[RMDB]
RNA sequence: GGGAACGACUCGAGUAGAGUCGAAAAGCACUGUUUCGGUGCGGGCCGCGAGAGCGGUACCAAAUCGAGGCAAACUCUGAAUACUAGAUAUGACCUGAAAAUAAUAAGGGUCAAGGUCGGCCAGUGAACCUAAGCCAAUGUUCGCAUUGGCUUAGGUAAAAGAAACAACAACAACAAC
Reactivity to 2A3 in 0.01 (KOAc 150mM, MgCl2 10mM, bicine 150mM(pH8.5), 24C), signal-to-noise 2, nucleotides 027 to 126: g070c030a020c170u040g020u040u030u040c030g000g000u010g000c060g010g020g020c000c000g000c000g000a040g010a000g050c000g000g100u030a300c000c010a050a000a000u020c040g000a010g010g020c010a060a030a070c040u070c030u010g080a080a050u110a230c080u050a110g050a130u060a060u090g020a020c010c000u040g050a000a090a000a060u260a060a020u060a060a040g000g000g010u000c000a000a000g060g020u000c000g000g080c020c000a020g000u050g100a020
Reactivity to DMS in 0.01 (KOAc 150mM, MgCl2 10mM, bicine 150mM(pH8.5), 24C), signal-to-noise 3, nucleotides 027 to 126: g010c070a090c160u000g020u000u010u000c000g000g000u000g000c300g010g000g000c000c000g000c000g020a160g000a220g010c030g020g020u000a100c000c010a070a300a040u000c010g010a010g010g000c000a010a140a190c110u000c040u030g010a250a100u000a070c020u000a060g000a040u000a110u000g010a000c000c000u000g000a090a090a100a200u010a080a080u000a160a300g010g000g030u000c010a020a060g000g000u000c010g000g010c080c010a100g020u000g000a160

Notes:
Structure probing data (2A3 and DMS) for a 177-nucleotide construct. The reactions ran in a buffer of 150 mM KOAc, 10 mM MgCl2 and 150 mM bicine (pH 8.5), at 24 C.